[RMDB]
RNA sequence: GGGAACGACUCGAGUAGAGUCGAAAAUUGAGUGAUCUGCAGCAGACGCCUUGUGCAGUACCACUCACCACGGCACGCGCGUCGCUCUCCGUGGAGCGCCUUAUCAGCGGCAACGAUAGCGUGAACAACGCCGACCGGAUUUCGAUCCGGUCGGCGUAAAAGAAACAACAACAACAAC
Reactivity to 2A3 in 0.01 (KOAc 150mM, MgCl2 10mM, bicine 150mM(pH8.5), 24C), signal-to-noise 2, nucleotides 027 to 126: u150u020g000a000g000u000g000a030u000c000u000g040c000a030g060c000a000g190a230c030g300c120c160u270u180g120u020g070c040a000g050u060a060c000c000a000c000u000c000a010c000c000a020c000g020g000c120a020c090g000c000g000c040g010u060c040g000c020u010c000u000c000c040g080u120g000g100a000g040c000g060c000c040u170u250a050u050c010a000g080c000g190g000c030a000a080c030g010a000u110a020g000c070g000u010g040a020a020c100a010